This 177-nucleotide RNA was probed chemically with 2A3 and DMS.
For 2A3 the reverse transcriptase was SuperScript II with manganese.
For DMS the reverse transcriptase was MarathonRT.
[RMDB]
RNA sequence: GGGAACGACUCGAGUAGAGUCGAAAAGAUAUGGAACGUGAGAGGGAGCAGGUCAUCGGAAACGAUGAUGCUGCUUUGAUCUCUACGUUCCUAAGUCAAAACCCAUACUUCUUCGGAAGUAUGGGAACAUAUUAUACAUCUUCGGAUGUAUAAUAUGAAAAGAAACAACAACAACAAC
Reactivity to 2A3 in 0.01 (KOAc 150mM, MgCl2 10mM, bicine 150mM(pH8.5), 24C), signal-to-noise 8, nucleotides 027 to 126: g010a000u030a010u080g000g000a000a010c010g020u110g090a120g010a000g040g060g020a070g010c000a010g000g020u000c010a000u010c010g020g000a060a020a010c030g000a000u020g010a010u130g290c010u000g000c000u030u040u020g020a020u000c000u000c000u010a010c000g000u000u000c000c000u000a010a000g000u000c020a020a040a100a280c000c000c000a000u000a000c010u000u010c010u030u090c300g200g010a000a010g000u000a000u000g000g000g000a000a000
Reactivity to DMS in 0.01 (KOAc 150mM, MgCl2 10mM, bicine 150mM(pH8.5), 24C), signal-to-noise 9, nucleotides 027 to 126: g000a020u000a230u010g000g010a010a010c000g020u000g010a060g010a020g000g000g000a010g020c000a010g000g000u000c000a010u000c000g010g000a070a050a110c000g010a010u000g000a010u000g020c000u000g010c000u000u000u010g000a080u010c000u000c000u000a010c000g020u000u000c000c000u000a010a080g000u000c020a130a080a160a200c010c000c000a010u000a000c000u000u000c000u000u010c270g030g000a020a010g010u000a000u000g000g000g010a010a040